An RNA of 177 nucleotides, treated with 2A3 and DMS and read out base by base. For DMS the reverse transcriptase was MarathonRT. It was measured as part of the RMDB library OK2TRN. The DMS profile rests on 2,400 reads. For 2A3 the reverse transcriptase was SuperScript II with manganese.
RNA sequence: GGGAACGACUCGAGUAGAGUCGAAAACAUGGACAUGAUCGACAUGCUAGGUGCGGAUCCUGAUCUCCAUGUGCACGUGACUAGGUACCGACUAUGGAUCUCAUGCUAGGGUACCAUGUCGAUCCAGCCGAGUGUAGAUUUUCGAAUCUACACUCGGAAAAGAAACAACAACAACAAC
Reactivity to 2A3 in 0.01 (KOAc 150mM, MgCl2 10mM, bicine 150mM(pH8.5), 24C), signal-to-noise 3, nucleotides 027 to 126: c040a050u080g060g020a020c080a210u180g000a010u010c000g010a010c020a010u040g050c020u050a020g100g000u100g030c130g020g020a020u000c000c000u050g070a150u060c030u020c080c020a050u070g050u040g050c040a040c150g160u180g080a070c040u060a080g010g030u070a060c040c020g010a020c070u100a050u180g040g000a050u020c000u030c060a020u170g230c030u020a000g040g050g050u040a060c050c050a000u000g000u020c000g000a020u010c020c010a020g060
Reactivity to DMS in 0.01 (KOAc 150mM, MgCl2 10mM, bicine 150mM(pH8.5), 24C), signal-to-noise 3, nucleotides 027 to 126: c040a050u000g000g020a150c300a120u020g000a020u010c000g000a020c010a010u000g010c040u000a030g000g000u000g000c210g010g000a040u000c000c010u000g000a100u010c190u010c050c040a080u010g010u010g000c050a080c120g000u000g000a120c130u010a130g000g010u000a130c070c050g000a090c100u010a090u000g010g010a060u000c050u010c040a040u000g010c050u010a000g000g010g000u010a080c300c020a010u000g010u000c010g000a030u000c020c150a150g000